[RMDB]
RNA sequence: GGGAACGACUCGAGUAGAGUCGAAAAGGCGUAGCCGACAACAUGCCCAGGUAGCCCAGACCUUCAAGGCUACGGUGCGUUGCGACGCAUGGUCUGAUUCUUCACAACGACGUUCACCGCGUCUUCUACAACCGGCAAAGAUUCGUCUUUGCCGGAACCAUUUAGUCGAGUUCGCUCGACUAAAUGGAAAAGAAACAACAACAACAAC
Reactivity to DMS in 0.01 (KOAc 150mM, MgCl2 10mM, bicine 150mM(pH8.5), 24C), signal-to-noise 2, nucleotides 027 to 156: g010g080c040g020u000a130g060c030c000g020a250c080a060a090c020a040u020g010c030c020c020a050g020g050u000a000g000c010c020c140a110g000a190c010c050u000u070c090a060a300g000g030c010u000a010c020g000g020u000g030c020g010u000u000g010c150g030a100c040g000c040a070u010g040g030u000c010u010g000a200u010u020c100u010u000c060a140c000a100a060c000g010a030c000g010u000u000c070a160c080c080g000c050g010u010c010u000u020c030u000a110c050a240a160c000c000g020g000c010a000a020a040g000a060u010u010c300g000u000c010u000u000u000g000c000c000g000g010a020a020
Reactivity to 2A3 in 0.01 (KOAc 150mM, MgCl2 10mM, bicine 150mM(pH8.5), 24C), signal-to-noise 6, nucleotides 027 to 156: g050g020c120g110u120a050g030c030c010g090a040c030a110a030c010a080u170g030c000c000c010a020g000g030u010a010g010c010c060c100a020g020a020c010c010u000u060c020a010a000g000g010c000u010a000c000g000g000u000g010c000g010u030u100g080c140g100a000c000g000c010a010u030g000g020u010c000u000g040a070u110u100c070u120u150c060a050c060a250a070c130g000a010c010g070u200u220c090a070c150c050g000c010g020u010c010u050u050c020u090a130c030a140a090c000c000g000g000c010a000a000a000g010a020u070u150c180g060u000c070u000u000u000g000c000c000g000g000a000a000